The data come from the RNA Mapping Database (RMDB), library TTRINS.
This 177-nucleotide RNA was probed chemically with DMS.
DMS adducts were read by reverse transcription with MarathonRT.
The reactions ran in a buffer of 150 mM KOAc, 10 mM MgCl2 and 150 mM bicine (pH 8.5), at 24 C.

[RMDB]
RNA sequence: GGGAACGACUCGAGUAGAGUCGAAAAGAUAUGGAGAGACACAAGCAUCUCUAUCAAGUGCUUGGACCCUAGGUCUCGGAAACGAGACUAGGCUAGCACGUAGAGAUGCUUGUGUCUCUCCUAAGUCCAGCUAAACAUGGUUCGCCAUGUUUAGCUGAAAAGAAACAACAACAACAAC
Reactivity to DMS in 0.01 (KOAc 150mM, MgCl2 10mM, bicine 150mM(pH8.5), 24C), signal-to-noise 2, nucleotides 027 to 126: g000a090u010a300u010g010g000a020g010a040g010a020c000a010c010a020a000g010c000a010u000c000u010c000u000a030u020c300a160a110g010u000g000c000u000u000g040g010a190c300c000c010u000a020g030g000u020c000u010c000g000g010a080a090a220c010g000a010g010a070c000u000a010g000g000c030u000a030g000c000a000c010g000u000a010g000a010g010a010u000g000c000u000u000g000u000g010u010c000u000c010u000c010c000u000a000a060g000u000c070